Source: RMDB library RFM100, as collected in RNAgym.
Structure probing data (2A3 and DMS) for a 177-nucleotide construct.
For 2A3 the reverse transcriptase was SuperScript II with manganese.
[RMDB]
RNA sequence: GGGAACGACUCGAGUAGAGUCGAAAAGUCUUUUGACUUUAUAUUUGAAAAUGUGUGUGCAUGUGCAUUCAUGAAGUGGAGAGAAAUGAUAAAUGCUUUCAUUUGAGUCAGAGUCGUACACAUCACAUGUUUCGGAAACUUUCGAGUUUCCGAAACAAAAAGAAACAACAACAACAAC
Reactivity to 2A3 in 0.01 (KOAc 150mM, MgCl2 10mM, bicine 150mM(pH8.5), 24C), signal-to-noise 2, nucleotides 027 to 126: g030u040c030u000u180u130u190g000a010c010u000u030u050a160u040a030u030u080u300g020a040a030a020a020u060g010u010g000u020g000u000g050c020a050u120g080u020g090c060a100u000u020c040a030u030g020a060a060g110u140g180g000a060g000a020g060a010a020a150u120g170a070u010a210a040a060u220g000c000u030u060u050c000a060u000u070u150g010a000g030u010c050a020g030a010g040u000c010g000u000a000c020a000c000a020u060c010a040c010a030
Reactivity to DMS in 0.01 (KOAc 150mM, MgCl2 10mM, bicine 150mM(pH8.5), 24C), signal-to-noise 1, nucleotides 027 to 126: g010u050c010u010u020u010u000g000a020c010u000u020u030a040u010a010u020u030u000g000a070a080a100a070u000g000u030g000u010g050u010g000c130a040u040g000u040g000c040a010u010u010c020a120u000g000a060a080g000u020g000g010a090g010a010g000a000a040a030u010g000a170u000a170a010a060u010g020c090u000u000u020c000a010u000u010u000g010a040g010u000c060a040g000a040g010u000c040g030u000a070c020a030c070a030u040c090a000c070a060
About this RNA
The reactions ran in a buffer of 150 mM KOAc, 10 mM MgCl2 and 150 mM bicine (pH 8.5), at 24 C.